Source information:
Structure probing data (2A3) for a 207-nucleotide construct. For 2A3, 582 sequencing reads were counted. The reactions ran in a buffer of 150 mM KOAc, 10 mM MgCl2 and 150 mM bicine (pH 8.5), at 24 C. 2A3 adducts were read by reverse transcription with SuperScript II with manganese. Values cover nucleotides 27 to 156. The data come from the RNA Mapping Database (RMDB), library PDB130.
[RMDB]
RNA sequence: GGGAACGACUCGAGUAGAGUCGAAAAUCAUAUCUAGCGCUUUCGAGCGCUAGAGUCCUUAUCUAGCCGGUUUAUACUUUCGAGUGUGAACCCGAUAUUCCGCGGAUCACUAUGAGUCGUUCGCGGCUCAUAGUCCGGCUCAAAGGACAUCAUGGCCGUGCAGAUAUGUGUUCGCACAUAUCUGCACAAAAGAAACAACAACAACAAC
Reactivity to 2A3 in 0.01 (KOAc 150mM, MgCl2 10mM, bicine 150mM(pH8.5), 24C), signal-to-noise 1, nucleotides 027 to 156: u040c000a030u060a030u160c000u010a010g030c050g000c030u200u020u050c300g220a000g000c020g000c000u000a000g000a000g000u010c000c000u100u030a100u030c160u080a010g010c030c000g000g010u000u030u030a040u010a040c050u100u120u160c300g060a020g010u000g000u010g000a000a070c000c000c000g000a010u020a080u300u140c080c050g000c030g020g000a050u050c000a020c020u020a030u040g000a000g000u020c020g030u060u080c140g030c000g120g000c000u000c010a000u000a000g020u000c000c000g010g030c000u000c050a040a070a000g020g000a000c000a030u190c090a030u030g020g000c000c040